[RMDB]
Structure probing data (2A3 and DMS) for a 177-nucleotide construct.

RNA sequence: GGGAACGACUCGAGUAGAGUCGAAAAUGGUGAGCGUCGGGACCGUCGUGACCUCCGAGGACGUGCGUUCAUUAGAGGACGAGCAGUGACGGUGCUGCUCGACGCCAACGUGCUGAUCGCAUUGGUGCUGUCCGCAAAGUUUCGACUUUGCGGACAGAAAAGAAACAACAACAACAAC
Reactivity to 2A3 in 0.01 (KOAc 150mM, MgCl2 10mM, bicine 150mM(pH8.5), 24C), signal-to-noise 3, nucleotides 027 to 126: u170g080g010u140g030a130g020c040g000u020c010g000g060g010a000c020c020g010u030c030g000u020g100a100c020c000u000c020c030g000a060g000g000a020c040g070u090g120c110g020u030u010c010a060u010u150a060g040a060g060g040a060c040g010a030g010c090a010g030u030g070a020c100g000g020u050g090c080u090g000c000u000c000g020a030c000g000c010c000a030a050c040g040u010g000c010u090g070a110u070c060g000c090a030u060u180g130g000u160g050
Reactivity to DMS in 0.01 (KOAc 150mM, MgCl2 10mM, bicine 150mM(pH8.5), 24C), signal-to-noise 1, nucleotides 027 to 126: u010g000g030u000g000a100g000c100g080u020c000g000g030g010a090c050c050g050u030c060g050u000g000a220c000c120u000c000c030g000a130g040g000a110c030g010u000g010c140g000u000u000c000a090u090u000a120g030a300g000g010a160c050g000a110g000c020a110g070u000g030a000c020g010g010u110g080c050u000g000c000u000c000g000a100c000g020c000c010a050a030c240g000u000g010c110u010g020a030u000c140g000c010a030u000u000g000g000u000g000
Conditions: 150 mM KOAc, 10 mM MgCl2 and 150 mM bicine (pH 8.5), 24 C. The DMS profile rests on 1,392 reads.